[RMDB]
RNA sequence: GGGAACGACUCGAGUAGAGUCGAAAACCGUAGGUCUUAGUAUUUCUUGGAUUUAUGGGUUGAUCUCACGUUCGAAAGAGCGUGAGAAACCCAUUGUCAGAAAUAUGGGAGACCUAAACGGAAAAUCGACUUAGUACGUUCGCGUACUAAGUCGAAAGCAGAGGAAAGGGUUCGCCCUUUCCUCUGCAAAAGAAACAACAACAACAAC
Reactivity to 2A3 in 0.01 (KOAc 150mM, MgCl2 10mM, bicine 150mM(pH8.5), 24C), signal-to-noise 1, nucleotides 027 to 156: c000c000g000u000a010g040g010u010c000u010u010a010g000u010a000u000u030u000c020u040u200g290g030a120u300u300u100a020u090g000g010g000u020u010g300a230u000c000u000c000a000c020g000u000u000c000g060a120a150a170g000a040g000c010g000u000g010a000g020a000a000a000c000c010c010a000u000u000g000u000c000a000g000a000a060a000u020a000u050g160g300g000a030g030a000c000c010u000a020a070a000c050g020g020a080a030a000a210u050c000g000a010c000u000u000a000g010u070a010c000g050u020u120c300g020c000g070u000a000c000u000a000a000g000u000c000g000a000a010a000
Record summary
Structure probing data (2A3) for a 207-nucleotide construct. It was measured as part of the RMDB library RNAMAK. The 2A3 profile rests on 657 reads.